[RMDB]
RNA sequence: GGGAACGACUCGAGUAGAGUCGAAAAUAAAAGUAGGCGAGUGAAAAGCUACACAAACAAACUCCUGGGCUUGGCACCCUCCUGUGCCCACAUCCGGCGCCCUUUCUUUGGGACCUGCCGGAGCCUGGAUGUAUAUGCGAUUCGUCGCAUAUACAUCAAAAGAAACAACAACAACAAC
Reactivity to 2A3 in 0.01 (KOAc 150mM, MgCl2 10mM, bicine 150mM(pH8.5), 24C), signal-to-noise 2, nucleotides 027 to 126: u130a000a060a000a000g030u040a040g090g000c030g050a090g030u070g080a090a050a000a000g020c020u140a080c100a010c040a060a280a020c030a070a110a100c050u100c040c070u080g010g060g030c000u000u020g040g010c020a020c000c000c000u060c020c000u100g030u060g030c000c030c010a010c020a050u010c010c000g050g000c010g050c030c020c020u070u300u160c090u250u270u050g030g000g010a080c020c090u040g080c000c000g050g000a010g000c000c020u040g120
Reactivity to DMS in 0.01 (KOAc 150mM, MgCl2 10mM, bicine 150mM(pH8.5), 24C), signal-to-noise 2, nucleotides 027 to 126: u020a060a090a100a120g030u010a010g020g000c040g010a060g020u000g010a020a060a110a080g010c000u000a030c060a050c140a070a050a110c100a140a140a150c140u000c120c130u000g000g000g020c030u000u000g000g000c060a060c040c020c000u010c040c000u000g000u010g000c000c010c050a090c200a060u000c000c000g030g020c010g000c010c000c010u000u010u020c110u010u000u000g010g000g010a100c120c120u000g040c020c010g010g000a030g040c130c120u000g020
Structure probing data (2A3 and DMS) for a 177-nucleotide construct. Source: RMDB library OK2TRN, as collected in RNAgym. For DMS, 1,336 sequencing reads were counted. Conditions: 150 mM KOAc, 10 mM MgCl2 and 150 mM bicine (pH 8.5), 24 C. Values cover nucleotides 27 to 126.